Annotation:
This 177-nucleotide RNA was probed chemically with 2A3. Values are in units of 0.01, from 0 to 300, in steps of 10. The reactions ran in a buffer of 150 mM KOAc, 10 mM MgCl2 and 150 mM bicine (pH 8.5), at 24 C.
RNA sequence: GGGAACGACUCGAGUAGAGUCGAAAAUAAAAUUAGCUUCUUCUCUCUUUUCAAAAGGAACAGCAAUGUGAGUAGCUAUAAACCCUAUUUCAUCUUGACUUAUUUUUAUAUGAUACUCAUUUUCUAUCAUUACCGUCACCUUCGGGUGACGGUAAUGAAAAGAAACAACAACAACAAC
Reactivity to 2A3 in 0.01 (KOAc 150mM, MgCl2 10mM, bicine 150mM(pH8.5), 24C), signal-to-noise 2, nucleotides 027 to 126: u070a010a080a010a010u020u030a040g000c000u010u000c000u150u000c000u030c000u050c040u080u180u030u090c140a250a180a030a030g160g000a060a040c060a120g000c110a040a190u170g090u040g010a020g010u060a000g000c010u000a020u060a090a220a130c010c000c000u020a000u030u070u000c040a030u010c060u050u020g020a040c020u000u050a050u040u210u010u070u140a210u100a060u300g090a050u020a200c010u030c070a030u070u050u050u040c010u000a010u040
For 2A3, 683 sequencing reads were counted. It was measured as part of the RMDB library OK1LIB.